[RMDB]
RNA sequence: GGGAACGACUCGAGUAGAGUCGAAAAGAUAUGGAAUCCACUCCUAACCAAUCCCACCUCGACGAAGAAUUUCGGAAACGAAAUUCAGAGAGGUGUGAGAUUCCCUUAGGAGUGGAUUCCUAAGUCACUCAUUAGUGGUGUUCGCACCACUAAUGAGAAAAGAAACAACAACAACAAC
Reactivity to DMS in 0.01 (KOAc 150mM, MgCl2 10mM, bicine 150mM(pH8.5), 24C), signal-to-noise 1, nucleotides 027 to 126: g000a050u010a300u010g000g020a010a000u000c000c000a040c000u000c010c000u010a000a030c120c170a020a030u000c000c000c000a000c000c030u000c000g000a250c230g010a110a090g000a050a000u000u000u000c000g040g010a110a070a250c000g000a000a020a010u000u000c000a050g010a130g000a010g020g040u030g000u010g010a160g000a020u000u000c140c050c040u000u000a010g000g000a010g000u000g000g010a000u000u000c000c000u010a000a090g020u010c040a300
The record gives the reactivity of an RNA of 177 nucleotides to DMS.